[RMDB]
RNA sequence: GGGAACGACUCGAGUAGAGUCGAAAAUUUACGGGCAGUUUCAGCACGUACACGCGGAUCAUGUCGUACGUGUGGUAUAGUAGACCUAGUUUGCGUGAGACUUUCUCACAGCAACUCGAUGAACUAUAGUAGCUCUCGCUGAGGUCGUUGAAGAGCCUCCUCAUAAGUGCUUCGGCACUUAUGAGGAAAAAGAAACAACAACAACAAC
Reactivity to 2A3 in 0.01 (KOAc 150mM, MgCl2 10mM, bicine 150mM(pH8.5), 24C), signal-to-noise 1, nucleotides 027 to 156: u110u050u050a060c030g020g000g060c070a000g000u110u000u000c060a010g060c010a000c000g010u000a000c030a000c010g170c110g120g010a070u170c050a110u300g080u000c140g000u000a000c000g000u000g010u030g010g000u030a000u000a020g070u010a010g070a050c010c000u000a000g000u010u020u100g020c010g000u000g010a000g010a040c050u150u290u000c000u080c000a000c020a000g040c000a000a060c000u020c030g120a100u130g020a010a010c010u010a010u000a030g140u030a050g010c000u000c000u000c000g030c070u090g020a040g020g020u020c030g030u060u100g080a070a000g000a000g060c010c000

Structure probing data (2A3) for a 207-nucleotide construct. Values cover nucleotides 27 to 156.